[RMDB]
Conditions: 150 mM KOAc, 10 mM MgCl2 and 150 mM bicine (pH 8.5), 24 C. The record gives the reactivity of an RNA of 207 nucleotides to 2A3 and DMS.

RNA sequence: GGGAACGACUCGAGUAGAGUCGAAAAAUGGUAGUUAGUCUACUCGCUAUCCUAGUUACUUUGGAGUAAUCUAUAGUGUGUGUAAACGGGCGAAAGUCUGUAAAAUACUGGGGACAUAGGGUCAACAAGAACUAGUAGACCUUCGGGUCUACUAGAACACCUGUCUAUGGUUCGCCAUAGACAGGUGAAAAGAAACAACAACAACAAC
Reactivity to 2A3 in 0.01 (KOAc 150mM, MgCl2 10mM, bicine 150mM(pH8.5), 24C), signal-to-noise 2, nucleotides 027 to 156: a000u040g000g000u020a010g020u060u050a040g060u000c020u030a020c010u020c010g020c020u050a050u080c000c020u020a040g050u050u040a030c040u100u040u180g080g070a050g000u060a020a050u020c060u030a050u070a110g050u070g000u040g000u000g030u100a030a050a100c020g000g020g010c020g020a130a060a020g000u020c040u030g040u040a050a080a040a080u150a040c040u010g030g000g010g020a020c040a040u100a030g020g010g000u030c010a000a020c010a130a010g080a070a010c000u000a000g000u000a000g010a000c000c000u000u020c130g000g000g000u000c000u000a000c000u000a000g000a000a000
Reactivity to DMS in 0.01 (KOAc 150mM, MgCl2 10mM, bicine 150mM(pH8.5), 24C), signal-to-noise 1, nucleotides 027 to 156: a170u000g000g030u000a040g000u020u010a100g000u010c030u010a040c010u000c060g030c040u000a040u010c100c050u000a160g040u000u040a020c040u000u000u000g000g040a180g000u000a040a100u000c020u000a080u000a020g040u010g010u000g020u010g040u030a030a090a060c040g000g010g000c020g000a100a070a300g150u000c060u020g010u000a020a080a090a080u000a040c070u000g000g000g010g000a080c060a080u000a100g020g000g000u020c040a030a090c130a040a150g000a090a130c010u010a010g000u010a010g000a030c000c010u010u020c300g070g030g060u010c000u010a000c000u000a010g000a050a200
The DMS profile rests on 1,813 reads.